[RMDB]
RNA sequence: GGGAACGACUCGAGUAGAGUCGAAAAGUUGAUCAUGAUAUGGAUGGAGUUGUGCAGAGUGCCAGGAAUUCGGAAACGAAUUCCGGUAAUUCUCUGCCCAACGUUGAAAUCCUAAGUCUUAUAGAAAGGUUUUAAUAAAGUUCGCUUUAUUAAAACCAAAAGAAACAACAACAACAAC
Reactivity to DMS in 0.01 (KOAc 150mM, MgCl2 10mM, bicine 150mM(pH8.5), 24C), signal-to-noise 4, nucleotides 027 to 126: g010u010u000g000a100u010c070a080u000g000a030u000a300u000g030g010a010u000g010g000a070g000u000u000g000u000g000c000a000g000a010g020u000g010c000c020a110g050g000a010a000u000u000c010g010g000a080a110a190c000g000a010a010u000u000c010c000g010g010u000a020a090u010u010c010u010c000u000g010c000c030c000a000a010c000g000u010u010g010a080a110a070u000c000c000u000a040a140g000u000c010u000u010a110u010a100g000a130a110a150
Reactivity to 2A3 in 0.01 (KOAc 150mM, MgCl2 10mM, bicine 150mM(pH8.5), 24C), signal-to-noise 1, nucleotides 027 to 126: g130u090u100g070a120u140c060a060u160g040a010u060a030u190g000g000a000u000g040g030a030g000u010u000g000u030g010c000a000g010a000g000u020g000c070c060a140g020g000a000a020u010u020c010g040g020a070a040a040c010g000a000a000u000u020c000c000g000g020u010a020a060u150u010c010u000c000u000g020c000c000c000a000a000c000g040u070u010g000a000a010a000u000c000c000u000a070a020g000u020c020u070u260a210u040a250g150a060a170a070